[RMDB]
RNA sequence: GGGAACGACUCGAGUAGAGUCGAAAACACGGGGGUCCCAGUGGAUCCGUGGGAUGCUCCUCCCGAUUCCGAUAUCCCUUCCCCCGAGAGGUCCCCCAGGAAUGGCGGGACCCCACUCUACAGGGUCCUUCUAGAUAGUCUUCGGACUAUCUAGAAGAAAAGAAACAACAACAACAAC
Reactivity to DMS in 0.01 (KOAc 150mM, MgCl2 10mM, bicine 150mM(pH8.5), 24C), signal-to-noise 2, nucleotides 027 to 126: c200a090c140g010g000g020g000g010u000c010c010c010a040g010u010g010g010a020u010c030c040g070u000g010g020g000a080u000g000c070u010c070c030u010c020c000c020g010a170u010u010c050c060g010a160u010a070u000c000c010c010u000u000c010c000c000c050c040g010a070g010a100g000g000u010c010c010c000c020c010a010g020g040a130a100u000g010g010c160g010g000g010a010c000c010c010c060a040c060u000c050u000a090c100a190g020g040g020u010c010